The data come from the RNA Mapping Database (RMDB), library TTRDES. An RNA of 177 nucleotides, treated with DMS and 2A3 and read out base by base. For DMS the reverse transcriptase was MarathonRT. The DMS profile rests on 3,788 reads. The RNA was probed in 150 mM KOAc, 10 mM MgCl2 and 150 mM bicine (pH 8.5) at 24 C. Values cover nucleotides 27 to 126. 2A3 adducts were read by reverse transcription with SuperScript II with manganese.
RNA sequence: GGGAACGACUCGAGUAGAGUCGAAAAGAUAUGGAUCCGUACGAGCUUUGAUCGUAGAUCGGAAACGAUCUACGGGAGCUCUUGUACCGGAUCCUAAGUCAAACCACGCAAGUUCGCUUGCGUGGAACAUCAGCGGUAAGUUCGCUUACCGCUGAUGAAAAGAAACAACAACAACAAC
Reactivity to DMS in 0.01 (KOAc 150mM, MgCl2 10mM, bicine 150mM(pH8.5), 24C), signal-to-noise 2, nucleotides 027 to 126: g000a000u000a150u020g000g000a010u000c010c000g050u000a000c010g000a010g010c010u000u010u010g000a040u030c000g010u000a010g000a000u000c000g000g010a030a020a040c000g010a010u000c000u000a010c000g000g020g000a000g020c010u010c000u010u030g050u000a010c210c130g020g020a000u000c010c000u000a010a070g000u000c000a100a150a300c010c000a000c000g000c000a000a000g000u000u010c300g010c000u000u000g000c000g020u000g010g010a020a070
Reactivity to 2A3 in 0.01 (KOAc 150mM, MgCl2 10mM, bicine 150mM(pH8.5), 24C), signal-to-noise 3, nucleotides 027 to 126: g000a010u030a000u070g010g000a000u000c010c030g000u020a010c010g000a010g020c010u300u300u060g000a020u030c010g010u000a000g000a010u010c030g000g010a010a010a000c020g000a000u010c000u010a000c000g000g000g000a000g000c040u010c000u020u120g020u010a050c130c150g020g010a010u000c010c000u000a010a000g000u000c020a080a070a140c010c010a010c010g030c010a010a040g030u170u210c300g110c200u000u000g000c010g000u000g000g000a010a020